[RMDB]
RNA sequence: GGGAACGACUCGAGUAGAGUCGAAAAACUCACAUCCCACUGUGUUUGAGCAGUUCUCUCUCUACGAUGCGGGAGGUGUAGGCUGUGAGGCCUGUGAGCGAGGUGACAACACAUACCUUGACCUGAGCGAGUUACGUGGUUUCGACCACGUAACUCGAAAAGAAACAACAACAACAAC
Reactivity to 2A3 in 0.01 (KOAc 150mM, MgCl2 10mM, bicine 150mM(pH8.5), 24C), signal-to-noise 1, nucleotides 027 to 126: a000c020u030c000a030c000a050u060c000c040c000a000c010u030g020u000g080u100u150u280g100a080g000c060a040g010u110u030c000u000c000u000c000u030c030u040a110c100g150a200u160g040c130g040g000g000a060g050g050u110g020u130a110g010g010c060u040g010u020g050a010g000g100c010c010u010g030u030g060a060g000c070g000a010g000g020u030g030a020c020a170a000c030a100c000a090u110a060c000c010u000u080g020a060c010c070u060g020a090g030
Reactivity to DMS in 0.01 (KOAc 150mM, MgCl2 10mM, bicine 150mM(pH8.5), 24C), signal-to-noise 1, nucleotides 027 to 126: a070c080u020c030a040c070a080u000c000c020c000a090c100u000g050u000g020u000u020u050g010a210g010c050a040g000u020u010c040u020c000u000c000u000c040u020a120c090g000a140u000g020c070g020g000g030a030g000g000u000g000u000a060g010g030c040u000g000u000g000a140g010g000c020c000u000g010u000g020a070g030c060g010a020g030g000u000g010a050c120a040a040c120a080c090a150u000a040c030c000u010u010g020a140c070c050u020g000a090g000

The record gives the reactivity of an RNA of 177 nucleotides to 2A3 and DMS.
The DMS profile rests on 1,019 reads.
The reactions ran in a buffer of 150 mM KOAc, 10 mM MgCl2 and 150 mM bicine (pH 8.5), at 24 C.
The data come from the RNA Mapping Database (RMDB), library OK2TRN.